[RMDB]
RNA sequence: GGGAACGACUCGAGUAGAGUCGAAAAGGGAUGCAAACUGGUGAGCUGUUAAUUCCUAUAGCAUCUAUUUUAUUAACAAUCCUAAGAUAUAAUAGCUCUGUUCUUAAAAAGGGUGUUUGAUGUUCUGAAUAUUCAGUGUAAUCCUCUGAGGCAUGAAUCUGAUCUUAUCUUUCGAGAUAAGAUCAGAAAAAGAAACAACAACAACAAC
Reactivity to DMS in 0.01 (KOAc 150mM, MgCl2 10mM, bicine 150mM(pH8.5), 24C), signal-to-noise 2, nucleotides 027 to 156: g000g020g030a050u000g000c030a090a120a100c070u010g030g040u010g030a070g000c010u020g010u000u000a080a230u000u010c020c010u000a130u000a100g000c050a030u000c030u000a120u010u010u000u000a070u020u000a040a130c030a070a130u020c020c030u000a080a240g020a140u010a100u000a040a090u010a050g020c040u000c040u000g010u000u000c040u010u000a040a040a110a140a300g000g010g030u000g010u010u000u000g010a080u000g010u010u030c060u000g030a020a080u000a080u000u000c040a040g010u000g020u000a070a080u010c040c010u000c000u000g010a110g010g020c060a050u030g000a140a180
Reactivity to 2A3 in 0.01 (KOAc 150mM, MgCl2 10mM, bicine 150mM(pH8.5), 24C), signal-to-noise 3, nucleotides 027 to 156: g080g030g000a010u020g030c010a090a090a050c060u060g020g060u060g020a060g050c010u030g020u120u100a080a050u100u090c000c010u050a040u070a140g000c010a020u110c020u020a050u050u080u050u050a050u030u040a090a040c050a100a120u030c000c030u090a170a100g030a030u060a030u060a150a070u050a070g000c000u000c020u010g030u060u000c020u050u160a100a100a040a050a060g030g010g000u030g040u050u070u050g060a070u040g030u110u020c040u060g030a080a080u130a130u120u070c030a020g030u020g000u100a050a050u090c030c020u000c060u140g020a020g040g040c030a030u110g070a060a030